[RMDB]
RNA sequence: GGGAACGACUCGAGUAGAGUCGAAAAAUACCAAAGCUGGUGACAGAUUAUGAAGUGAUAGUAAUGUUAUCACAUUGCGGCAGUUACAUCUUAGGAAGGGAUUAUAUUUCAGUUUUGAUGCAAGUCAUGAGUGCUCAAUGUUCGCAUUGAGCACUCAAAAAGAAACAACAACAACAAC
Reactivity to DMS in 0.01 (KOAc 150mM, MgCl2 10mM, bicine 150mM(pH8.5), 24C), signal-to-noise 1, nucleotides 027 to 126: a100u020a150c020c000a100a100a090g010c060u000g040g020u000g000a090c080a060g020a060u000u010a090u010g010a060a070g010u010g010a030u000a020g000u000a060a060u000g010u000u010a050u010c040a000c030a150u000u000g020c080g020g040c060a060g020u000u020a080c050a030u000c040u000u000a080g010g020a040a130g030g010g040a090u000u000a080u010a140u010u010u000c020a050g000u000u000u000u000g010a050u000g010c160a050a130g010u000c100a140